Source information:
This 177-nucleotide RNA was probed chemically with 2A3 and DMS. The reactions ran in a buffer of 150 mM KOAc, 10 mM MgCl2 and 150 mM bicine (pH 8.5), at 24 C. DMS adducts were read by reverse transcription with MarathonRT. For DMS, 2,802 sequencing reads were counted. High 2A3 reactivity points to a flexible backbone, as in loops and unpaired stretches.

RNA sequence: GGGAACGACUCGAGUAGAGUCGAAAAGGCGGUCAGCAACAUCGCCAACGUCAAAACCGCCGUCGAGCGGCAUGUCAUUGACUCGCUGGAUGCUGAGACCGAGGACGCACCGGUGGGCGAGAAGGGCGUAAGAAAGACGGUUCGCCGUCUUUCUUACAAAAGAAACAACAACAACAAC
Reactivity to 2A3 in 0.01 (KOAc 150mM, MgCl2 10mM, bicine 150mM(pH8.5), 24C), signal-to-noise 2, nucleotides 027 to 126: g040g010c030g000g090u040c030a040g040c030a100a080c040a060u010c030g030c000c020a020a010c050g050u020c020a020a060a120a120c010c010g000c040c010g250u110c050g030a140g030c030g040g000c030a080u180g030u070c030a100u030u120g030a110c010u000c060g000c000u050g040g050a110u050g000c030u050g030a030g050a060c010c060g020a070g000g030a020c040g000c000a030c020c020g050g000u030g040g050g000c030g000a010g020a020a050g050g060g000c020
Reactivity to DMS in 0.01 (KOAc 150mM, MgCl2 10mM, bicine 150mM(pH8.5), 24C), signal-to-noise 4, nucleotides 027 to 126: g010g040c030g030g000u000c050a120g020c120a110a070c140a040u010c030g020c120c010a100a070c100g000u000c050a030a040a160a250c040c030g010c030c020g030u000c200g000a110g010c020g000g000c100a040u000g010u000c070a120u010u000g010a050c020u020c060g010c060u000g010g020a100u000g000c030u010g000a170g000a060c030c050g020a080g000g000a140c170g000c040a090c030c050g020g000u010g000g010g010c040g010a060g010a070a090g020g010g020c210